[RMDB]
Chemical mapping of a 177-nucleotide RNA with 2A3 and DMS. The 2A3 profile rests on 5,914 reads. For 2A3 the reverse transcriptase was SuperScript II with manganese. The data come from the RNA Mapping Database (RMDB), library OK1LIB.

RNA sequence: GGGAACGACUCGAGUAGAGUCGAAAAGAGAUCGAGACGAUUGGAAACGACGUUCGUGGGGACUUUGAAGAGGAGGUCCAAGGCGUGAGUCUUUUCGUCAAGAACGUCAAUUUUUGCACUUCAGAGGUAAAAUGCGGAUAUUCGUAUCCGCAUUUUAAAAAGAAACAACAACAACAAC
Reactivity to 2A3 in 0.01 (KOAc 150mM, MgCl2 10mM, bicine 150mM(pH8.5), 24C), signal-to-noise 7, nucleotides 027 to 126: g100a000g010a020u070c040g010a000g020a070c040g040a060u020u070g030g050a070a080a020c070g040a010c020g040u070u190c060g030u170g020g140g020g020a060c000u060u070u120g140a160a120g050a040g160g030a020g010g010u000c000c010a020a070g060g000c020g040u050g040a040g040u020c000u000u060u010u040c010g030u020c030a040a020g020a020a020c020g030u030c010a020a030u050u060u040u090u100g050c060a030c050u100u060c050a060g020a040g110g100
Reactivity to DMS in 0.01 (KOAc 150mM, MgCl2 10mM, bicine 150mM(pH8.5), 24C), signal-to-noise 4, nucleotides 027 to 126: g010a120g020a050u010c040g010a300g000a010c040g000a050u000u010g000g000a010a070a090c160g000a020c000g010u000u020c010g030u010g010g020g010g000a050c020u010u000u020g030a130a120g010a160g010g000a030g000g010u010c010c010a040a060g000g000c000g000u020g010a110g010u000c010u000u000u000u020c080g020u010c010a060a150g010a030a050c040g000u010c040a080a070u000u000u020u010u000g000c090a090c090u010u010c040a070g010a110g010g010